Structure probing data (2A3 and DMS) for a 177-nucleotide construct.
For DMS the reverse transcriptase was MarathonRT.
The reactions ran in a buffer of 150 mM KOAc, 10 mM MgCl2 and 150 mM bicine (pH 8.5), at 24 C.
RNA sequence: GGGAACGACUCGAGUAGAGUCGAAAAGAGGGAGGUUUCACUCUGCAGAGAUCUCUCCCCCGUCGCGUGGCGGGUGGGAACACGUUAGUGCGGGGGGAUUUGGGAUGGCAAGUGGAUGAGAUGGAGCUUCGUGCGCAAAUUUCGAUUUGCGCACGAAAAAAGAAACAACAACAACAAC
Reactivity to 2A3 in 0.01 (KOAc 150mM, MgCl2 10mM, bicine 150mM(pH8.5), 24C), signal-to-noise 2, nucleotides 027 to 126: g130a040g000g000g010a030g030g000u000u040u130c010a010c010u030c030u040g020c010a000g000a010g010a150u000c030u000c030u030c000c000c000c000c000g000u040c020g000c030g010u050g060g040c080g010g110g050u160g000g030g010a020a020c010a000c040g070u080u140a080g050u070g070c010g010g000g000g020g020g000a010u060u070u120g030g030g000a030u030g020g040c030a030a060g010u030g050g030a080u060g020a050g010a060u030g010g010a010g010c000
Reactivity to DMS in 0.01 (KOAc 150mM, MgCl2 10mM, bicine 150mM(pH8.5), 24C), signal-to-noise 1, nucleotides 027 to 126: g000a100g090g030g060a120g010g020u030u010u000c010a100c040u000c090u000g000c070a190g010a190g000a030u000c020u000c000u050c030c010c010c010c040g000u030c010g060c070g020u030g000g060c080g010g010g000u070g000g000g030a060a180c050a030c030g050u000u060a100g020u030g000c070g000g010g000g000g000g010a030u050u020u010g000g000g040a080u000g000g040c000a050a100g000u040g000g000a050u010g000a140g000a090u020g000g000a090g000c080